[RMDB]
RNA sequence: GGGAACGACUCGAGUAGAGUCGAAAAUUCGGGGUGAAGUCUGAUUACAAAUGAAAGUGAAAUAAUGCUGUAGACCACAGCAUUCUGAGCUGCAGAGCUGGGCAUGAGCUGAGGAUCAGAGGCUGCAGACACAUGUUGGUCAGAGCCCAAGCCUUGACGCUCUAGUAUCUUUCGAGAUACUAGAGCGAAAAGAAACAACAACAACAAC
Reactivity to 2A3 in 0.01 (KOAc 150mM, MgCl2 10mM, bicine 150mM(pH8.5), 24C), signal-to-noise 2, nucleotides 027 to 156: u050u020c050g000g020g020g020u080g060a040a020g090u010c010u030g000a010u100u130a100c040a050a070a040u130g050a190a080a050g120u120g070a060a020a130u150a040a000u040g010c000u000g000u050a040g040a070c000c050a000c030a020g000c000a000u030u020c020u080g060a040g010c020u020g020c010a000g000a050g080c030u030g010g010g010c040a090u150g120a030g070c100u130g050a060g100g050a080u080c000a000g040a050g040g030c020u000g010c000a030g070a010c010a000c000a040u050g040u050u040g020g010u000c020a000g010a000g020c000c010c020a020a040g060c020c000u020u070g010a000
Reactivity to DMS in 0.01 (KOAc 150mM, MgCl2 10mM, bicine 150mM(pH8.5), 24C), signal-to-noise 1, nucleotides 027 to 156: u060u000c030g030g010g000g060u000g000a100a150g010u020c020u010g040a090u000u000a150c090a040a090a050u000g030a120a040a120g020u010g000a170a090a110u000a050a040u010g070c000u000g000u010a130g000a150c140c070a280c010a020g020c000a070u000u000c030u000g020a180g020c020u000g030c010a070g000a080g030c010u000g000g010g070c020a170u010g010a090g050c000u000g020a070g000g000a040u010c020a030g000a040g010g020c000u010g030c000a090g060a110c020a060c110a110u000g020u000u000g010g020u020c040a050g000a110g000c020c000c040a050a290g010c070c010u000u010g010a300